[RMDB]
RNA sequence: GGGAACGACUCGAGUAGAGUCGAAAAGGAAUCAAGAUUAGUUGUCUGUCUGUCUUAAUUCGGGAAACAUGCUUCUUUUACGCACCUUAGAUCGGUCUCCAUGUGCUCUUGAUUCUGAGGUUGAAAAUCAUGUCCUCACUUUCGAGUGAGGACAUGAAAAAGAAACAACAACAACAAC
Reactivity to 2A3 in 0.01 (KOAc 150mM, MgCl2 10mM, bicine 150mM(pH8.5), 24C), signal-to-noise 1, nucleotides 027 to 126: g020g000a030a000u010c010a000a000g040a060u110u130a000g110u060u090g070u170c020u020g110u020c010u050g170u000c060u100u200a140a160u130u120c010g010g000g050a050a120a000c050a020u080g060c020u060u010c000u000u170u040u060a030c030g030c040a080c000c000u040u000a050g000a140u090c090g030g000u030c040u080c060c050a140u180g040u040g000c000u020c000u030u100g000a030u060u000c000u030g060a040g010g120u080u100g080a100a060a000a010
Reactivity to DMS in 0.01 (KOAc 150mM, MgCl2 10mM, bicine 150mM(pH8.5), 24C), signal-to-noise 2, nucleotides 027 to 126: g000g000a020a030u000c040a010a010g000a080u000u020a070g020u000u000g020u000c120u010g010u010c030u020g000u010c060u010u010a070a150u000u000c100g000g050g010a070a050a070c150a040u010g000c040u010u010c030u040u000u000u010a100c160g000c070a040c020c050u000u010a050g000a060u000c090g010g020u000c040u000c060c070a120u010g000u010g000c130u010c000u000u000g000a030u010u000c010u000g020a050g010g020u010u020g000a060a100a110a150